Structure probing data (DMS and 2A3) for a 177-nucleotide construct. For 2A3 the reverse transcriptase was SuperScript II with manganese. The RNA was probed in 150 mM KOAc, 10 mM MgCl2 and 150 mM bicine (pH 8.5) at 24 C. The data come from the RNA Mapping Database (RMDB), library TTRDEL. DMS adducts were read by reverse transcription with MarathonRT.

[RMDB]
RNA sequence: GGGAACGACUCGAGUAGAGUCGAAAAGAUAUGGAGAAUGGAGACAUGGAGUGUCGGAAACGACACACCAACAGCUCCCUUCUCCUAAGUCAAAAGACGAUCGUCAUCUUCGGAUGACGAUCGUCAAGUAGGGGAUAAGGUUCGCCUUAUCCCCUACAAAAGAAACAACAACAACAAC
Reactivity to DMS in 0.01 (KOAc 150mM, MgCl2 10mM, bicine 150mM(pH8.5), 24C), signal-to-noise 2, nucleotides 027 to 126: g010a050u000a300u000g000g000a020g000a020a020u020g010g010a010g020a080c090a210u000g000g010a090g040u010g020u000c010g020g010a060a040a160c010g000a000c010a010c010a070c000c000a020a060c290a130g010c010u000c000c000c060u000u000c000u020c000c000u000a000a040g000u000c030a120a060a110a100g000a010c000g010a000u000c000g010u000c000a000u010c020u000u000c200g020g000a020u000g010a020c000g000a010u010c000g010u000c000a010a070
Reactivity to 2A3 in 0.01 (KOAc 150mM, MgCl2 10mM, bicine 150mM(pH8.5), 24C), signal-to-noise 1, nucleotides 027 to 126: g000a000u050a010u140g000g000a000g010a000a020u000g000g020a020g010a090c090a180u030g000g000a110g010u000g010u020c000g010g030a020a010a030c010g020a000c000a000c000a010c000c010a020a150c100a050g030c000u000c000c000c010u000u010c000u000c000c000u010a050a000g000u020c020a010a030a010a300g010a000c000g030a010u000c000g000u010c020a010u000c030u070u070c300g110g010a000u040g000a010c000g010a000u000c000g010u000c010a000a000